[RMDB]
RNA sequence: GGGAACGACUCGAGUAGAGUCGAAAAGCAGUGGCGCACGGCCAUUGACGUGCUUAAGCUAAACCAGGCGAAUGGACAGCUUACAAAGCCGAUGUUGCUGGAUGCGGCUCACGCCUGUGCAACGUCCACCAUACCUCCGUUUCGACGGAGGUAUGGUAAAAGAAACAACAACAACAAC
Reactivity to 2A3 in 0.01 (KOAc 150mM, MgCl2 10mM, bicine 150mM(pH8.5), 24C), signal-to-noise 5, nucleotides 027 to 126: g010c020a010g040u030g080g030c030g020c040a060c100g150g000c010c050a090u060u120g020a020c020g050u090g010c010u120u110a030a000g000c000u030a090a030a090c000c010a030g080g020c040g130a150a100u100g010g000a010c040a080g000c010u040u050a070c110a080a150a010g010c030c020g090a100u170g020u210u100g020c020u050g030g030a080u150g040c000g010g000c020u040c020a010c020g010c000c000u040g000u030g020c010a030a030c050g040u000c000c020
Reactivity to DMS in 0.01 (KOAc 150mM, MgCl2 10mM, bicine 150mM(pH8.5), 24C), signal-to-noise 4, nucleotides 027 to 126: g040c010a060g010u000g000g010c160g040c130a050c120g000g000c040c090a050u000u030g010a110c050g020u030g000c120u010u000a090a050g000c010u010a090a060a070c100c010a010g000g010c080g000a120a150u010g000g000a150c190a070g010c000u000u010a060c290a150a170a070g010c000c030g010a100u010g050u010u020g000c050u030g000g000a080u010g030c300g020g010c010u010c090a040c070g010c000c000u000g000u030g020c010a030a040c040g000u010c000c010
The record gives the reactivity of an RNA of 177 nucleotides to 2A3 and DMS. The reactions ran in a buffer of 150 mM KOAc, 10 mM MgCl2 and 150 mM bicine (pH 8.5), at 24 C.